Structure probing data (2A3 and DMS) for a 177-nucleotide construct. The RNA was probed in 150 mM KOAc, 10 mM MgCl2 and 150 mM bicine (pH 8.5) at 24 C.
RNA sequence: GGGAACGACUCGAGUAGAGUCGAAAAGACAACAAUGGCAGGAGUGCGGGUCUGGCUAUGGUUUCCCUGGUUGCCAGCCCGGAAGGACGGAUGACGCAGGGUGAGACCCGGAUGGUCAUGACAGAGCCAUUCGGUUUCCUUUCGAGGAAACCGAAUGAAAAGAAACAACAACAACAAC
Reactivity to 2A3 in 0.01 (KOAc 150mM, MgCl2 10mM, bicine 150mM(pH8.5), 24C), signal-to-noise 3, nucleotides 027 to 126: g060a030c050a130a000c020a090a280u080g020g060c010a000g000g040a080g030u110g050c000g020g000g040u080c020u020g010g000c040u060a050u150g120g000u030u050u060c000c000c020u030g140g010u010u050g000c010c010a000g000c010c000c000g020g010a050a050g020g000a020c030g020g030a040u080g000a000c040g000c090a040g040g000g000u050g070a070g020a020c000c010c000g010g010a070u150g030g000u020c010a050u040g010a040c020a050g010a040g060c000
Reactivity to DMS in 0.01 (KOAc 150mM, MgCl2 10mM, bicine 150mM(pH8.5), 24C), signal-to-noise 3, nucleotides 027 to 126: g020a100c100a080a080c130a060a040u020g010g020c000a030g010g010a090g020u020g010c000g020g000g000u060c030u000g000g000c000u010a060u010g000g010u040u000u010c010c010c020u010g010g050u020u010g000c000c010a070g010c020c000c000g000g010a070a080g030g010a110c050g030g010a070u020g000a060c080g010c030a060g000g010g000u000g010a060g000a300c030c000c030g010g000a070u040g020g000u000c020a040u010g010a120c110a100g000a170g010c080